[RMDB]
RNA sequence: GGGAACGACUCGAGUAGAGUCGAAAACCUAUCCAAAAUGAGAUCCCAUCUUGCACACUGUGGUAAUUUGAGAUUCUCAUGCCUCCUACUUGGAGAGAUCUGGACUAGAAGUCAGGGCAUCUGACUCAAUACAUUCGUCAGUUCGCUGACGAAUGAACUAUGUAGACCAGUUCGCUGGUCUACAUAGAAAAGAAACAACAACAACAAC
Reactivity to 2A3 in 0.01 (KOAc 150mM, MgCl2 10mM, bicine 150mM(pH8.5), 24C), signal-to-noise 9, nucleotides 027 to 156: c000c000u010a050u010c020c010a080a050a060a020u000g000a010g000a020u000c000c000c010a000u010c010u000u010g000c010a020c030a100c180u280g240u300g170g000u030a010a020u020u000u010g030a020g010a030u300u040c000u000c000a000u020g020c000c000u000c000c000u140a300c150u170u260g010g000a010g000a000g000a050u050c060u120g000g020a020c020u050a090g040a120a010g080u000c000a000g030g070g190c100a150u100c070u010g000a000c000u000c020a040a070u100a090c010a000u000u010c000g000u000c000a010g010u010u110c170g020c090u000g000a000c000g000a000a000u000g000a010a000
Reactivity to DMS in 0.01 (KOAc 150mM, MgCl2 10mM, bicine 150mM(pH8.5), 24C), signal-to-noise 3, nucleotides 027 to 156: c020c020u000a130u000c030c030a030a040a140a140u000g010a080g010a060u000c010c000c010a020u000c050u010u010g010c010a050c020a160c180u020g040u010g040g030u000a010a030u000u000u000g000a030g010a020u000u010c010u020c010a020u000g000c090c000u000c010c000u000a200c170u000u010g000g010a020g020a130g010a060u000c050u010g010g020a170c120u000a130g010a080a050g010u000c010a020g040g020g000c150a100u000c010u010g000a040c010u000c030a050a110u010a110c020a030u000u000c010g020u000c000a020g030u010u010c290g030c000u000g000a020c010g030a010a000u010g010a080a170